Chemical mapping of a 177-nucleotide RNA with 2A3 and DMS. The DMS profile rests on 915 reads. Reactivities are given for positions 27 through 126. For DMS the reverse transcriptase was MarathonRT.
RNA sequence: GGGAACGACUCGAGUAGAGUCGAAAAGUCAGCUUGUUCGCAAGCUGACAAACUGGACACACCCACACCCUGGCGAAGCCGUGUCAAAAUGGGUGUGGGUAAAAAGGACACUGUUCGCAGUGUCCAACGGGAUGUUAGUGUUCGCACUAACAUCCCGAAAAGAAACAACAACAACAAC
Reactivity to 2A3 in 0.01 (KOAc 150mM, MgCl2 10mM, bicine 150mM(pH8.5), 24C), signal-to-noise 1, nucleotides 027 to 126: g000u000c000a000g000c000u000u010g040u060u200c160g000c090a000a010g020c000u000g000a020c000a000a000a000c000u010g160g050a010c030a000c040a000c140c000c000a000c000a000c000c000c000u040g030g000c170g080a150a070g080c010c100g100u150g080u140c030a120a080a050a050u140g000g000g000u010g000u000g010g000g000u000a080a000a010a000a000g010g000a000c000a000c000u010g010u090u050c160g000c080a010g020u000g010u040c000c000a000a000
Reactivity to DMS in 0.01 (KOAc 150mM, MgCl2 10mM, bicine 150mM(pH8.5), 24C), signal-to-noise 1, nucleotides 027 to 126: g020u000c000a010g000c000u000u000g010u000u010c190g030c000a010a000g020c000u000g000a000c000a020a030a080c070u010g000g000a170c180a120c180a080c030c000c000a010c030a000c000c010c000u000g010g010c130g030a090a090g050c030c090g000u000g000u000c200a030a090a240a180u010g010g000g040u000g000u010g000g010g030u010a000a010a060a130a010g000g000a020c000a010c010u000g030u000u000c090g040c040a000g000u000g000u010c000c000a050a100
The reactions ran in a buffer of 150 mM KOAc, 10 mM MgCl2 and 150 mM bicine (pH 8.5), at 24 C. The data come from the RNA Mapping Database (RMDB), library M2PK50.